This 177-nucleotide RNA was probed chemically with DMS and 2A3. DMS adducts were read by reverse transcription with MarathonRT. Source: RMDB libraries RFM100 and RFMREP, as collected in RNAgym. 2A3 adducts were read by reverse transcription with SuperScript II with manganese.
RNA sequence: GGGAACGACUCGAGUAGAGUCGAAAAUACUCGUGCGAGUAAUCCACGAUCGCUACAACGCGCUAAGCAAUGGAGAUGAUUCUUGAGGGAAGCAAUUCUGCAGAGACAUCUCCACCCUGGGGUGGCGCUGCAUCAAUGGAUUCGUCCAUUGAUGCAGAAAAGAAACAACAACAACAAC
Reactivity to DMS in 0.01 (KOAc 150mM, MgCl2 10mM, bicine 150mM(pH8.5), 24C), signal-to-noise 6, nucleotides 027 to 126: u010a090c060u010c030g030u000g020c140g020a050g000u020a090a100u010c000c020a040c070g000a050u010c050g010c020u000a030c080a110a130c140g020c000g020c100u020a090a110g000c040a130a150u010g000g000a020g010a010u000g000a140u030u000c000u010u030g050a200g010g000g010a020a030g000c270a080a140u000u000c000u000g010c070a270g000a020g000a020c010a010u000c000u010c000c000a010c040c030c010u000g010g010g000g030u010g000g010c010g010
Reactivity to 2A3 in 0.01 (KOAc 150mM, MgCl2 10mM, bicine 150mM(pH8.5), 24C), signal-to-noise 9, nucleotides 027 to 126: u120a010c010u010c010g040u040g060c150g010a030g030u100a020a160u000c010c000a040c020g020a060u070c030g000c040u070a030c030a130a030c070g030c000g010c110u130a060a040g030c010a030a240u050g010g000a000g000a000u020g030a090u090u030c010u020u050g040a190g010g060g010a020a020g050c060a050a240u040u010c010u060g040c050a020g000a000g000a020c000a000u000c000u000c000c000a000c000c000c010u060g000g010g010g040u030g020g000c010g000